The record gives the reactivity of an RNA of 177 nucleotides to DMS and 2A3. It was measured as part of the RMDB library OK2TRN. Values cover nucleotides 27 to 126. High 2A3 reactivity points to a flexible backbone, as in loops and unpaired stretches. DMS (dimethyl sulfate) methylates the pairing face of unpaired adenines and cytosines.

RNA sequence: GGGAACGACUCGAGUAGAGUCGAAAACGCCACACUGAGAAGUGCGUCAUCAUUGACGCACCGGGCCUGCUUCGCGAGGUGGGCAUCUCCGAUGCAAUCGUCAACAACUUUUUCCUCGCCGGUGGCGCUGCAACCUAAAUUUCGAUUUAGGUUGCAGAAAAGAAACAACAACAACAAC
Reactivity to DMS in 0.01 (KOAc 150mM, MgCl2 10mM, bicine 150mM(pH8.5), 24C), signal-to-noise 8, nucleotides 027 to 126: c050g020c000c010a020c030a140c130u000g020a100g030a160a090g020u000g010c000g010u000c010a040u000c280a240u020u000g000a010c000g010c000a000c000c070g010g010g010c060c060u010g000c050u000u000c090g010c100g020a020g010g010u000g000g030g020c060a090u000c020u000c090c100g020a040u000g010c050a080a070u010c090g010u010c070a080a090c180a080a090c070u000u000u000u000u000c010c020u000c040g030c060c130g000g010u000g010g000c010g010
Reactivity to 2A3 in 0.01 (KOAc 150mM, MgCl2 10mM, bicine 150mM(pH8.5), 24C), signal-to-noise 7, nucleotides 027 to 126: c020g010c000c000a010c000a000c050u110g050a030g030a240a020g010u010g010c010g020u020c000a070u050c020a080u030u180g000a000c000g000c000a000c000c000g010g020g020c010c010u040g010c010u090u090c040g030c070g030a020g030g020u100g020g130g000c020a030u020c110u010c040c080g030a010u030g020c030a040a120u090c040g100u090c060a040a050c010a020a060c140u080u100u010u100u060c010c010u020c020g030c040c020g090g010u020g000g000c010g000